Chemical mapping of a 177-nucleotide RNA with DMS and 2A3. DMS adducts were read by reverse transcription with MarathonRT. Reactivities are given for positions 27 through 126. The reactions ran in a buffer of 150 mM KOAc, 10 mM MgCl2 and 150 mM bicine (pH 8.5), at 24 C.

RNA sequence: GGGAACGACUCGAGUAGAGUCGAAAAUCGCUAACAGUUUCCACAAAUGCAAUCAUAUCAGAGCAAAGUGCUUAGGAGAGGUGUCAUGGGAAAGAAGUAAGUGACAUGACGGAUCUACGGGAAGCAGUAACUAUCGGUGGUUCGCCACCGAUAGUUAAAAAGAAACAACAACAACAAC
Reactivity to DMS in 0.01 (KOAc 150mM, MgCl2 10mM, bicine 150mM(pH8.5), 24C), signal-to-noise 2, nucleotides 027 to 126: u000c050g010c070u000a080a140c160a070g020u020u000u020c040c000a080c070a060a110a090u010g020c040a090a060u000c050a040u000a030u010c050a090g000a110g020c050a030a090a060g000u000g020c030u000u000a140g010g000a040g030a060g040g000u020g000u000c020a010u000g000g020g030a070a070a150g010a090a130g020u020a070a120g020u010g000a040c050a040u020g000a070c010g000g000a120u000c020u000a020c080g010g000g020a040a030g010c090a070g020
Reactivity to 2A3 in 0.01 (KOAc 150mM, MgCl2 10mM, bicine 150mM(pH8.5), 24C), signal-to-noise 1, nucleotides 027 to 126: u010c020g000c140u030a080a000c020a130g000u000u000u000c050c000a070c040a050a140a020u140g020c040a030a110u050c030a120u120a070u160c040a040g000a010g110c000a190a060a000g080u080g020c030u020u060a060g060g040a080g050a030g070g160u070g000u050c020a030u040g040g000g070a080a090a030g100a030a000g100u080a110a020g030u000g070a020c010a020u000g020a010c070g030g000a020u000c000u070a030c050g090g000g000a010a010g000c020a020g080